[RMDB]
RNA sequence: GGGAACGACUCGAGUAGAGUCGAAAAUGUAGGCACUUCAGUGACACAGCUCCAUGCCACAGAUGCUGACAUAGGUGAAAAUGCCAAGAUCCACUUCUCUUUCAGCAAUCUAGUCUCCAACAUUGCCAGGAGAUUAUUUCACCUCAAUGCCACCACAGCAGGACUAAUAUUUCGAUAUUAGUCCUGCAAAAGAAACAACAACAACAAC
Reactivity to DMS in 0.01 (KOAc 150mM, MgCl2 10mM, bicine 150mM(pH8.5), 24C), signal-to-noise 1, nucleotides 027 to 156: u000g020u000a120g000g050c000a010c030u000u010c090a200g050u000g010a050c000a070c020a050g020c030u000c070c030a230u010g010c000c030a050c020a150g000a080u000g040c010u010g010a040c040a040u020a090g000g020u010g010a030a040a060a100u000g000c000c000a060a080g000a080u000c010c100a040c090u000u000c060u000c010u000u000u000c080a040g000c010a040a060u010c080u000a070g040u010c010u000c030c030a040a080c060a110u000u010g030c060c090a180g000g020a050g000a040u000u010a050u000u000u000c020a070c010c010u010c050a030a050u020g020c000c010a100c010c020a050c040a260
Reactivity to 2A3 in 0.01 (KOAc 150mM, MgCl2 10mM, bicine 150mM(pH8.5), 24C), signal-to-noise 4, nucleotides 027 to 156: u120g010u080a180g020g020c020a020c040u090u080c120a110g030u030g090a020c020a000c010a090g020c040u020c020c010a040u070g050c010c010a060c000a000g100a050u100g020c030u020g020a030c010a070u150a010g000g000u010g030a010a010a020a050u080g020c010c000a020a020g020a050u080c040c040a080c050u150u060c040u020c000u040u130u070c040a020g000c000a030a060u020c040u060a010g030u040c010u000c030c010a110a040c050a220u090u240g040c040c010a030g000g000a010g000a000u030u020a050u020u040u010c020a020c000c010u040c030a040a030u040g020c020c000a030c020c010a050c020a030
Description: Source: RMDB library OK3TST, as collected in RNAgym. Chemical mapping of a 207-nucleotide RNA with DMS and 2A3. DMS adducts were read by reverse transcription with MarathonRT. For 2A3 the reverse transcriptase was SuperScript II with manganese. The reactions ran in a buffer of 150 mM KOAc, 10 mM MgCl2 and 150 mM bicine (pH 8.5), at 24 C. The 2A3 profile rests on 2,679 reads.